[RMDB]
RNA sequence: GGGAACGACUCGAGUAGAGUCGAAAAGUGGAUAGUUUCGACUAUCCACACAACUGAUGAUCUUACAGUGGAGGAUGAAGAAGAUGGCCAUCGCAUCCUCAAAUAGCACAGAGUUCGCUCUGUGCAAGGAGUUUAUCCGAUUCGUCGGAUAAACUCCAAAAGAAACAACAACAACAAC
Reactivity to 2A3 in 0.01 (KOAc 150mM, MgCl2 10mM, bicine 150mM(pH8.5), 24C), signal-to-noise 2, nucleotides 027 to 126: g020u000g010g000a000u010a010g000u000u040u150c160g040a010c010u000a000u000c000c000a010c000a000c000a020a000c010u080g000a050u050g020a020u110c020u070u210a060c030a060g030u130g140g020a010g020g000a020u020g020a030a240g040a070a020g050a100u120g110g030c060c020a030u030c010g000c030a000u000c000c000u000c020a020a020a040u100a010g000c010a000c010a000g000a000g000u030u050c090g040c050u000c000u000g000u000g000c000a000a020
Reactivity to DMS in 0.01 (KOAc 150mM, MgCl2 10mM, bicine 150mM(pH8.5), 24C), signal-to-noise 1, nucleotides 027 to 126: g000u010g010g000a010u000a010g010u000u000u030c210g010a040c000u000a000u000c000c000a010c000a100c180a110a050c010u000g000a180u010g010a170u000c040u030u010a080c030a020g030u000g000g000a010g040g000a040u000g000a040a080g080a040a080g010a040u000g000g010c050c050a050u000c020g020c020a000u000c010c010u000c000a030a040a130u020a110g010c010a010c010a010g010a020g060u000u000c230g010c010u020c000u000g010u000g000c050a040a020
This 177-nucleotide RNA was probed chemically with 2A3 and DMS. The reactions ran in a buffer of 150 mM KOAc, 10 mM MgCl2 and 150 mM bicine (pH 8.5), at 24 C. DMS adducts were read by reverse transcription with MarathonRT. In probing experiments dimethyl sulfate is read out at A N1 and C N3, which are open when not base-paired.